[RMDB]
RNA sequence: GGGAACGACUCGAGUAGAGUCGAAAAGCCGCGGUCAUUAUGCGGAUGCAGCGAGAUAAUCAGGCUCUCGCGAUUGUCCAGAUUGCGGCACAUCCAUUCGAUCUGGUCGGCAUAGACAUUCGGCGUAGCCCAUAGUCGUCUUCGGACGACUAUGGGCAAAAGAAACAACAACAACAAC
Reactivity to 2A3 in 0.01 (KOAc 150mM, MgCl2 10mM, bicine 150mM(pH8.5), 24C), signal-to-noise 2, nucleotides 027 to 126: g000c010c020g000c020g010g010u010c040a080u040u300a060u270g170c150g000g020a000u070g050c050a040g010c030g000a000g000a030u070a110a140u210c030a030g110g120c020u000c000u000c000g010c040g040a060u090u300g010u030c000c000a020g000a030u000u040g030c020g020g000c010a000c000a020u040c000c010a040u100u070c040g100a100u060c010u050g000g000u020c010g080g000c040a070u060a080g030a090c040a090u040u040c080g070g000c060g000u000a020
Reactivity to DMS in 0.01 (KOAc 150mM, MgCl2 10mM, bicine 150mM(pH8.5), 24C), signal-to-noise 2, nucleotides 027 to 126: g000c020c010g040c030g050g010u000c030a120u000u010a060u020g030c130g000g000a040u000g040c300a220g000c010g000a020g000a000u010a050a160u010c200a060g030g000c240u000c010u000c010g040c010g000a120u000u030g010u000c050c000a170g000a020u010u000g060c120g010g020c070a080c120a120u010c120c040a210u010u010c100g000a070u000c050u000g010g010u000c050g000g000c060a050u000a050g010a090c080a040u000u010c080g000g000c030g030u010a100
Source information:
The record gives the reactivity of an RNA of 177 nucleotides to 2A3 and DMS. High DMS reactivity at an A or C suggests that its Watson-Crick edge is free. The reactions ran in a buffer of 150 mM KOAc, 10 mM MgCl2 and 150 mM bicine (pH 8.5), at 24 C. The data come from the RNA Mapping Database (RMDB), library OK2TST.